[RMDB]
RNA sequence: GGGAACGACUCGAGUAGAGUCGAAAAUCUGAGUAAUCGGCUUUGAGAUUUCCGUUCUAAGAUUAACUGGGAUACUUCAGUGGAGCAAUCCAGCAGAGAUCCAGUUGCCGUGGGUAUGGCGGUGGGAUAGCAACAAAGUGGUAUAUGUUAUGGAAGGGCGAACUGUAGUGUUCGCACUACAGUUCGCAAAAGAAACAACAACAACAAC
Reactivity to 2A3 in 0.01 (KOAc 150mM, MgCl2 10mM, bicine 150mM(pH8.5), 24C), signal-to-noise 1, nucleotides 027 to 156: u000c000u040g030a010g040u120a040a140u040c030g030g000c000u060u110u120g060a110g020a100u120u100u020c040c010g010u060u040c040u090a060a060g010a100u100u000a030a010c010u020g000g000g150a040u100a200c010u010u070c000a110g050u060g030g000a010g020c020a060a120u010c010c010a060g000c030a040g020a010g000a010u010c010c000a010g020u000u020g000c080c000g000u040g000g000g030u090a090u070g060g000c020g020g000u110g030g030g010a030u040a050g050c000a000a050c000a060a060a050g100u060g040g070u000a060u070a010u200g060u070u020a090u160g050g020a050a000g070g050